About this RNA: Structure probing data (2A3 and DMS) for a 177-nucleotide construct. 2A3 adducts were read by reverse transcription with SuperScript II with manganese. High 2A3 reactivity points to a flexible backbone, as in loops and unpaired stretches.
[RMDB]
RNA sequence: GGGAACGACUCGAGUAGAGUCGAAAAUGGGGAUCCAGGUUUCUGGAUGGUGUCUGAGCGACUCGAUGCUGAAUGGAAACUCACAAGUCUGUCUCUAGCUGAAAGUAGGCGCUGCCUGUGGCCUGACCGUUAUUCUGAUUUUCGAAUCAGAAUAACGAAAAGAAACAACAACAACAAC
Reactivity to 2A3 in 0.01 (KOAc 150mM, MgCl2 10mM, bicine 150mM(pH8.5), 24C), signal-to-noise 6, nucleotides 027 to 126: u100g010g000g010g020a010u020c030c020a040g080g040u060u200u120c020u030g040g020a060u040g030g010u030g010u000c050u090g040a040g040c060g070a050c020u010c040g020a030u080g010c060u030g040a060a060u080g030g040a060a060a040c040u050c020a050c020a060a050g040u000c030u020g070u020c010u000c040u130a050g000c030u030g060a110a070a010g070u080a040g060g000c040g000c060u030g020c010c010u050g020u060g040g010c000c010u030g030a060c020
Reactivity to DMS in 0.01 (KOAc 150mM, MgCl2 10mM, bicine 150mM(pH8.5), 24C), signal-to-noise 9, nucleotides 027 to 126: u010g010g010g000g010a090u000c020c020a050g010g010u010u010u000c020u000g010g010a060u000g010g020u000g010u000c030u000g000a100g030c100g010a080c040u000c050g010a120u010g000c040u000g010a070a070u000g010g000a060a070a070c050u000c140a070c220a090a090g010u000c030u000g010u000c050u000c030u000a060g010c040u000g000a080a050a090g010u000a070g010g010c040g010c050u000g000c040c020u000g020u000g010g010c030c020u000g010a120c190